[RMDB]
RNA sequence: GGGAACGACUCGAGUAGAGUCGAAAAAGAAUUGUACCACCACUGCGUAUCCUACACGGGCUCUGCAGUGGUUAUUCUUGUAAAGUACUAGGAGUGAAUAGUGGCCCGUAUUGCAGGCAUUAACAUUAAAAGGCAAUCCACUUCGGUGGAUUGCCAAUCGUUAUUUAUUCUUCGGAAUAAAUAACGAAAAAGAAACAACAACAACAAC
Reactivity to 2A3 in 0.01 (KOAc 150mM, MgCl2 10mM, bicine 150mM(pH8.5), 24C), signal-to-noise 1, nucleotides 027 to 156: a000g070a070a060u130u060g060u090a020c010c000a010c000c000a000c000u000g000c000g050u070a100u080c010c030u160a140c100a030c190g020g030g000c060u060c090u130g020c030a000g000u000g000g000u030u030a000u000u020c010u030u000g030u060a050a110a020g100u010a050c070u060a080g100g040a050g020u110g060a060a180u090a130g020u040g050g000c010c000c010g040u050a020u000u120g020c060a010g040g020c040a040u170u110a030a030c030a080u140u240a020a230a110a020g000g000c000a000a000u000c000c000a000c000u030u010c150g000g000u000g020g000a000u010u000g000c000c000a000a000
Reactivity to DMS in 0.01 (KOAc 150mM, MgCl2 10mM, bicine 150mM(pH8.5), 24C), signal-to-noise 2, nucleotides 027 to 156: a070g030a040a050u000u010g010u010a110c110c150a090c020c000a000c020u000g000c000g010u000a050u010c050c010u000a130c190a090c150g060g000g030c040u000c050u020g000c020a020g010u000g010g000u010u000a010u000u000c030u010u010g020u000a070a070a130g000u000a040c020u000a060g000g020a120g040u000g020a120a110u000a050g030u010g020g020c020c020c010g000u000a110u000u020g000c040a090g010g030c040a030u010u020a010a140c040a130u000u010a060a020a150a190g020g010c010a010a000u000c010c000a050c010u010u020c300g060g060u030g010g000a000u000u020g010c010c030a000a010
The record gives the reactivity of an RNA of 207 nucleotides to 2A3 and DMS. DMS adducts were read by reverse transcription with MarathonRT. The 2A3 profile rests on 594 reads. Conditions: 150 mM KOAc, 10 mM MgCl2 and 150 mM bicine (pH 8.5), 24 C. It was measured as part of the RMDB library M2RFPK.